Chemical mapping of a 207-nucleotide RNA with DMS and 2A3. For DMS, 2,390 sequencing reads were counted. Values cover nucleotides 27 to 156.

RNA sequence: GGGAACGACUCGAGUAGAGUCGAAAAGGGGUCGAUGUCAAAGAGGGUAAGACAUGAGCUGAAGCCUCCACGGCUCAACAGCUUACCUCCCCACCUUUGAGAUCGACGGAGGCACCCAAAACGGCAGAAUAAUGUGUUCGCACAUUAUUCUGCCGAAUCUUUAACAAGUCUUCGGACUUGUUAAAGAAAAAGAAACAACAACAACAAC
Reactivity to DMS in 0.01 (KOAc 150mM, MgCl2 10mM, bicine 150mM(pH8.5), 24C), signal-to-noise 2, nucleotides 027 to 156: g020g020g050g010u000c010g050a040u040g000u000c000a020a060a070g020a240g000g000g050u040a060a090g040a100c100a210u050g020a040g000c010u000g000a100a040g070c020c010u000c030c070a300c210g020g070c000u010c010a060a070c040a150g040c030u000u000a050c010c030u010c300c020c000c030a300c050c010u020u000u000g000a050g020a030u010c000g010a050c010g020g050a020g020g010c000a090c000c000c020a050a060a100a170c000g020g050c000a020g000a020a040u000a040a000u000g060u000g010u000u000c300g000c050a000c000a020u000u000a050u000u000c000u010g010c000c000g000a020a000
Reactivity to 2A3 in 0.01 (KOAc 150mM, MgCl2 10mM, bicine 150mM(pH8.5), 24C), signal-to-noise 3, nucleotides 027 to 156: g120g000g030g000u010c020g000a010u040g100u220c000a010a000a000g020a050g000g000g020u020a000a000g020a090c130a280u240g010a000g000c000u020g010a110a000g030c000c000u000c000c010a010c000g010g000c000u030c010a040a060c050a040g150c000u010u000a000c000c000u070c060c020c010c000a030c000c010u000u000u000g020a050g000a000u000c000g010a000c000g000g000a000g000g010c010a030c020c010c010a030a100a000a010c020g000g000c000a000g010a000a000u000a000a000u000g020u010g020u070u140c290g020c100a000c000a010u010u000a000u000u000c000u000g000c000c000g000a000a000
About this RNA
For 2A3 the reverse transcriptase was SuperScript II with manganese. The data come from the RNA Mapping Database (RMDB), library RNAMAK.